[RMDB]
RNA sequence: GGGAACGACUCGAGUAGAGUCGAAAAACAAGGAGAGGUAAGACGACUACCUUGAUCAUUGUCAACAACUUCGUCCAUAGCUUCGUGACCGUCGUGGUUGGUCGGGUGACCUGUAGAUAAUCCAAGCUGAGCAUACGAAGUUCGCUUCGUAUGCUCAAAAAGAAACAACAACAACAAC
Reactivity to 2A3 in 0.01 (KOAc 150mM, MgCl2 10mM, bicine 150mM(pH8.5), 24C), signal-to-noise 1, nucleotides 027 to 126: a000c040a020a020g070g020a060g000a010g000g040u060a090a020g070a060c110g060a020c050u000a030c000c000u040u020g010a000u000c020a020u000u090g030u050c030a030a040c010a050a000c130u120u070c010g020u040c020c030a060u020a120g030c010u060u010c050g100u060g110a060c060c000g040u060c030g040u050g030g130u110u040g000g060u010c000g010g150g030u060g000a020c010c000u030g000u070a050g030a120u100a100a000u000c000c020a020a020g000c000
Reactivity to DMS in 0.01 (KOAc 150mM, MgCl2 10mM, bicine 150mM(pH8.5), 24C), signal-to-noise 2, nucleotides 027 to 126: a050c050a060a050g000g000a070g000a060g010g020u000a050a120g000a120c130g010a120c060u000a070c050c040u010u010g000a160u010c040a060u000u000g000u010c090a110a120c140a050a060c090u000u020c060g010u000c060c020a090u010a070g000c060u000u010c050g000u030g000a050c070c090g030u000c040g020u000g000g030u000u000g010g020u020c020g000g010g010u010g000a060c050c010u000g000u010a080g020a090u000a070a080u030c030c010a050a100g000c160